[RMDB]
RNA sequence: GGGAACGACUCGAGUAGAGUCGAAAACACAGUGGUGUCCCCCUGUAGCCCCUACUCAGAAAGCUGAGAUGGGAGGAUUACUUGAGCCUGCAAAGUUGAGUCUGCAGUGAGCCAUGAUAACACCAUUACACUCUAGCCUGGACUACAGAGCGCAAGAUAAAUGCUGAUCAUUCGUGAUCAGCAUUUAAAAAGAAACAACAACAACAAC
Reactivity to 2A3 in 0.01 (KOAc 150mM, MgCl2 10mM, bicine 150mM(pH8.5), 24C), signal-to-noise 2, nucleotides 027 to 156: c040a010c010a070g170u060g090g060u070g080u060c000c000c000c030c000u040g020u030a020g030c000c000c080c000u030a080c000u040c000a020g020a290a120a070g160c000u000g010a010g000a060u030g000g000g010a140g040g040a130u070u050a040c000u000u000g040a010g010c000c000u020g000c070a120a040a000g040u060u110g100a020g030u060c040u100g010c010a000g030u020g110a050g010c000c070a040u070g040a060u080a140a020c080a020c030c000a020u030u050a050c090a000c000u040c000u020a050g010c000c000u020g070g040a130c020u070a040c060a010g010a040g040c040g030c020a000a000g040a090
Reactivity to DMS in 0.01 (KOAc 150mM, MgCl2 10mM, bicine 150mM(pH8.5), 24C), signal-to-noise 2, nucleotides 027 to 156: c020a120c090a130g020u010g010g030u000g000u010c020c010c000c010c030u000g030u000a100g010c010c000c010c030u000a190c010u030c020a040g010a120a130a200g020c040u010g000a060g020a160u000g000g000g000a150g010g010a140u000u000a050c050u000u020g020a050g010c040c000u010g030c040a040a070a000g030u000u010g020a120g000u010c050u000g040c030a040g040u010g020a120g020c050c100a120u000g010a160u010a090a060c060a030c040c000a070u000u000a080c030a010c020u010c010u000a090g030c050c040u000g010g030a100c010u020a040c010a060g010a080g020c040g000c060a040a050g010a300